[RMDB]
The data come from the RNA Mapping Database (RMDB), library OK2TRN. The record gives the reactivity of an RNA of 177 nucleotides to DMS and 2A3. 2A3 adducts were read by reverse transcription with SuperScript II with manganese. Conditions: 150 mM KOAc, 10 mM MgCl2 and 150 mM bicine (pH 8.5), 24 C. For 2A3, 8,098 sequencing reads were counted. For DMS the reverse transcriptase was MarathonRT.
RNA sequence: GGGAACGACUCGAGUAGAGUCGAAAAUGAGGAAAGAACGCUUAUGGGUAGGAAAUGGACAUGUUGACCUUAAUUUUCAUGUUAGGUAAUGCCCAUUGUGCUCUACAGAACAUUCAUGAGUUGGAUGAAGUCGUGUAUUAUUCGUAAUACACGACUUAAAAGAAACAACAACAACAAC
Reactivity to DMS in 0.01 (KOAc 150mM, MgCl2 10mM, bicine 150mM(pH8.5), 24C), signal-to-noise 9, nucleotides 027 to 126: u010g010a100g010g010a110a090a060g010a060a070c110g010c040u010u000a060u000g010g000g020u000a040g010g010a080a080a040u010g000g010a020c020a010u000g010u000u010g010a050c110c070u010u020a040a080u000u010u010u010c160a050u010g010u000u000a040g000g000u010a100a050u000g000c020c000c000a020u000u000g000u000g010c030u010c010u000a070c110a120g010a100a140c060a050u010u000c030a040u000g000a120g020u000u000g010g000a060u000g000
Reactivity to 2A3 in 0.01 (KOAc 150mM, MgCl2 10mM, bicine 150mM(pH8.5), 24C), signal-to-noise 6, nucleotides 027 to 126: u150g020a040g080g070a180a090a030g020a060a020c030g010c040u100u090a020u070g000g020g020u020a010g050g150a030a050a090u080g070g010a000c010a010u060g030u050u080g090a050c000c010u100u140a120a090u050u090u090u070c050a020u110g020u030u030a030g020g060u080a050a020u030g000c010c000c000a010u010u020g020u030g010c010u030c000u030a040c030a020g100a120a030c010a060u030u040c000a030u140g150a060g210u110u050g040g030a040u070g050